[RMDB]
Conditions: 150 mM KOAc, 10 mM MgCl2 and 150 mM bicine (pH 8.5), 24 C. This 177-nucleotide RNA was probed chemically with 2A3 and DMS. DMS adducts were read by reverse transcription with MarathonRT. 2A3 adducts were read by reverse transcription with SuperScript II with manganese. For DMS, 11,576 sequencing reads were counted.

RNA sequence: GGGAACGACUCGAGUAGAGUCGAAAAGCCUUCUUUCGAGGUCUUCCGCGUCUUUUCUUGCUUGGAUCCAUUUCUCGAGGACGUCCUCCCUUCCUCCCCUCCGGGUCCUCUUCGUCUCGGACUGGCUUCAUGUAUAGUAGUUCGCUACUAUACAUGAAAAAGAAACAACAACAACAAC
Reactivity to 2A3 in 0.01 (KOAc 150mM, MgCl2 10mM, bicine 150mM(pH8.5), 24C), signal-to-noise 5, nucleotides 027 to 126: g010c010c000u050u030c030u060u120u080c050g020a020g030g020u020c020u040u020c030c010g020c030g040u040c030u020u100u050u030c030u060u120g050c010u020u070g050g030a040u050c020c020a090u080u090u010c020u010c020g020a040g060g050a140c010g040u030c010c000u010c000c000c000u030u040c000c000u000c000c010c000c010u000c000c000g020g010g010u020c020c020u050c030u100u070c030g030u000c010u010c010g030g010a030c020u020g040g010c000u000
Reactivity to DMS in 0.01 (KOAc 150mM, MgCl2 10mM, bicine 150mM(pH8.5), 24C), signal-to-noise 5, nucleotides 027 to 126: g000c040c020u000u000c050u000u000u000c070g010a050g000g000u010c030u000u000c020c040g010c110g010u000c020u000u000u000u000c040u000u010g020c070u000u000g010g000a080u010c060c060a110u000u000u000c010u000c030g000a060g000g000a130c090g000u000c030c030u000c010c010c020u000u000c010c000u000c010c010c010c020u000c020c030g010g000g000u000c020c060u000c080u000u000c110g010u000c040u000c040g000g010a090c080u000g010g000c110u000